[RMDB]
RNA sequence: GGGAACGACUCGAGUAGAGUCGAAAACUUGAGGCAGAUCUCCGAGAUCGGUUAGUGGAGGCGGAUGUGGAAGCAGAGUUGCUCCUCAAGGGAUUUUCCACUGCAGCGGUAUUCGCCUCUCAUGCAGCAUGUCACGUGGAUUCGUCCACGUGACAUGAAAAGAAACAACAACAACAAC
Reactivity to DMS in 0.01 (KOAc 150mM, MgCl2 10mM, bicine 150mM(pH8.5), 24C), signal-to-noise 2, nucleotides 027 to 126: c020u000u000g010a000g000g010c130a200g000a030u000c030u000c180c160g020a150g000a040u000c010g000g010u010u000a090g000u010g000g000a030g000g000c010g000g000a030u000g020u000g000g010a060a100g010c140a100g010a140g000u000u010g000c080u000c020c010u010c040a040a050g000g000g000a180u000u000u000u000c020c010a090c030u000g010c050a060g000c080g010g010u000a030u000u000c000g010c010c000u000c000u000c050a110u000g010c120a110g000
Reactivity to 2A3 in 0.01 (KOAc 150mM, MgCl2 10mM, bicine 150mM(pH8.5), 24C), signal-to-noise 2, nucleotides 027 to 126: c000u000u060g000a030g000g040c070a020g030a090u010c010u030c070c150g140a110g010a240u070c070g010g110u100u180a090g010u090g000g030a010g000g000c050g010g000a040u020g020u060g140g020a100a020g000c010a010g020a040g180u130u130g040c010u000c000c000u010c050a060a000g040g010g000a020u050u030u040u020c000c030a050c030u050g020c040a010g040c060g080g000u020a010u010u020c020g000c000c000u000c010u000c020a010u110g150c020a030g000
This 177-nucleotide RNA was probed chemically with DMS and 2A3. The RNA was probed in 150 mM KOAc, 10 mM MgCl2 and 150 mM bicine (pH 8.5) at 24 C.